[RMDB]
RNA sequence: GGGAACGACUCGAGUAGAGUCGAAAAACUCUUUCAAUGAUGGAAUGAAGUAGGGGUAAAUGUAGGAUUUCCCAUCCUGAAUCAUGGCACUCCCUGGGUUCACCAUUUAUCCUGGAAGAUGGGAUACCUUUACCCAAAGUUUCGACUUUGGGUAAAGAAAAGAAACAACAACAACAAC
Reactivity to 2A3 in 0.01 (KOAc 150mM, MgCl2 10mM, bicine 150mM(pH8.5), 24C), signal-to-noise 3, nucleotides 027 to 126: a010c020u030c000u020u040u020c070a080a070u140g020a050u070g040g040a140a100u040g010a090a010g070u080a030g040g010g000g020u060a020a170a010u100g050u110a020g000g030a010u020u060u030c020c020c000a010u030c000c000u020g050a070a050u070c020a040u070g080g000c060a020c130u130c000c000c000u020g000g100g000u010u020c020a010c030c010a010u010u060u060a060u040c020c020u030g030g040a040a010g050a080u130g020g020g040a010u080a110c000
Reactivity to DMS in 0.01 (KOAc 150mM, MgCl2 10mM, bicine 150mM(pH8.5), 24C), signal-to-noise 5, nucleotides 027 to 126: a060c070u000c010u000u000u000c020a050a070u000g010a050u000g000g000a090a110u000g010a050a060g020u000a070g000g010g010g010u000a040a060a020u000g010u000a020g010g010a040u000u010u000c010c020c020a300u010c010c010u000g010a090a060u010c040a070u000g000g010c160a090c120u000c020c000c010u000g000g010g000u000u000c020a090c060c010a020u000u000u000a030u010c130c100u000g000g000a030a030g000a060u010g000g010g010a100u000a090c210